[RMDB]
Chemical mapping of a 177-nucleotide RNA with 2A3 and DMS. The DMS profile rests on 2,609 reads.
RNA sequence: GGGAACGACUCGAGUAGAGUCGAAAAGUAAGAUGAUUCGUCAUCUUACGAACCCGAUGAAGCGGCACAUACCGAGCUUCAUACAUCUAAGAGUGGAAAUAAUGGCGCGUGGUUUCGACCACGCGAAACCCAGAGAAUUGUUCGCAAUUCUCUGGGUAAAAGAAACAACAACAACAAC
Reactivity to 2A3 in 0.01 (KOAc 150mM, MgCl2 10mM, bicine 150mM(pH8.5), 24C), signal-to-noise 2, nucleotides 027 to 126: g010u000a010a010g000a010u030g010a010u010u080c110g090u040c100a000u000c000u010u000a000c000g000a040a030c000c050c000g000a020u010g020a020a000g010c000g090g000c150a060c030a280u240a110c090c040g040a020g030c020u040u000c010a000u020a050c040a050u080c040u140a110a100g090a090g110u160g090g080a100a060a070u250a150a080u150g210g000c000g000c000g010u000g000g040u030u030u070c150g100a000c000c000a000c010g000c010g000a010a010
Reactivity to DMS in 0.01 (KOAc 150mM, MgCl2 10mM, bicine 150mM(pH8.5), 24C), signal-to-noise 3, nucleotides 027 to 126: g000u000a040a010g000a020u000g010a000u000u000c220g000u010c000a000u000c000u000u000a000c000g040a110a120c010c010c010g020a040u000g000a020a010g010c010g000g000c100a170c250a130u010a080c030c020g000a160g020c000u000u000c010a010u000a100c090a070u000c070u010a050a110g020a140g010u000g000g010a120a090a080u000a060a070u010g010g010c010g030c000g040u000g000g020u000u000u000c190g010a030c010c010a010c000g020c010g000a010a040
Overview:
Source: RMDB library M2PK50, as collected in RNAgym. For 2A3 the reverse transcriptase was SuperScript II with manganese. The RNA was probed in 150 mM KOAc, 10 mM MgCl2 and 150 mM bicine (pH 8.5) at 24 C. Values cover nucleotides 27 to 126.